[RMDB]
An RNA of 207 nucleotides, treated with 2A3 and DMS and read out base by base. Values cover nucleotides 27 to 156.

RNA sequence: GGGAACGACUCGAGUAGAGUCGAAAAGGAAAUGAGUUUGAAAUUUAAUGAGAGUCGUUAGUCUCUAUAGGGGUUUCUAGCUGAGGAGACAUAACGUAUAGUACCUAGGAACUAAGCAUGUAGAGGUUAGCGGGGAGUUUACUAAGGACGAGAGUUCGGUACAUAUAUGGUUCGCCAUAUAUGUACCAAAAGAAACAACAACAACAAC
Reactivity to 2A3 in 0.01 (KOAc 150mM, MgCl2 10mM, bicine 150mM(pH8.5), 24C), signal-to-noise 4, nucleotides 027 to 156: g030g010a050a030a030u130g000a050g040u100u120u080g090a130a130a070u150u170u110a100a070u190g060a040g000a020g160u040c000g000u000u000a010g010u000c000u010c020u020a050u120a160g080g050g000g030u010u190u070c060u080a050g000c030u080g110a040g100g030a060g040a020c020a020u080a030a000c010g020u060a030u030a140g010u010a030c000c000u020a020g020g000a000a020c040u040a110a020g080c070a080u110g000u050a020g010a000g040g010u040u030a020g000c020g000g000g020g000a010g010u020u020u050a040c030u030a030a090g010g010a010c020g020a040g010a010g070u040u150c060
Reactivity to DMS in 0.01 (KOAc 150mM, MgCl2 10mM, bicine 150mM(pH8.5), 24C), signal-to-noise 1, nucleotides 027 to 156: g020g000a030a060a050u000g010a110g020u000u010u000g010a090a090a030u000u010u000a040a070u000g000a180g020a250g000u010c040g000u000u010a060g010u000c000u000c020u000a060u010a160g040g010g000g020u040u000u000c040u000a140g020c070u000g000a180g050g010a210g010a040c030a110u000a060a080c140g010u000a150u010a080g040u010a060c040c020u000a070g020g000a050a060c010u000a070a140g020c020a120u010g090u000a080g000a070g020g010u000u000a060g020c060g000g000g050g040a090g000u010u000u000a040c040u000a060a080g020g020a060c060g000a130g000a110g010u010u010c050
The DMS profile rests on 2,343 reads. Source: RMDB library ARCHII, as collected in RNAgym.